[RMDB]
RNA sequence: GGGAACGACUCGAGUAGAGUCGAAAAAGCACUGGUACGAUACGUCGUACCAGUGGAGUCGUUGGGAUGGAACGCAAUUAAAUACAUGUGUGACGUGUAUUUGCGAACGACGUAAUUAUUUUUCAAAAUCACGCUAUCGUGUUCGCACGAUAGCGAACAACUCCCUGAUGUUCGCAUCAGGGAGUUGAAAAGAAACAACAACAACAAC
Reactivity to 2A3 in 0.01 (KOAc 150mM, MgCl2 10mM, bicine 150mM(pH8.5), 24C), signal-to-noise 2, nucleotides 027 to 156: a000g080c000a000c000u000g030g000u000a000c020g010a000u010a010c160g130u020c000g000u000a000c000c000a000g000u000g000g020a090g010u000c010g060u040u060g090g080g030a140u140g060g090a060a060c000g000c010a000a000u220u110a060a070a000u060a000c000a000u030g120u040g120u180g240a100c040g010u040g000u020a040u010u020u020g000c000g030a000a000c020g020a010c020g020u050a100a020u160u220a080u060u190u020u050u150c070a100a040a030a070u180c080a050c080g000c010u000a000u000c000g000u000g000u030u050c110g000c040a000c050g000a000u000a000g010c000g010a000a010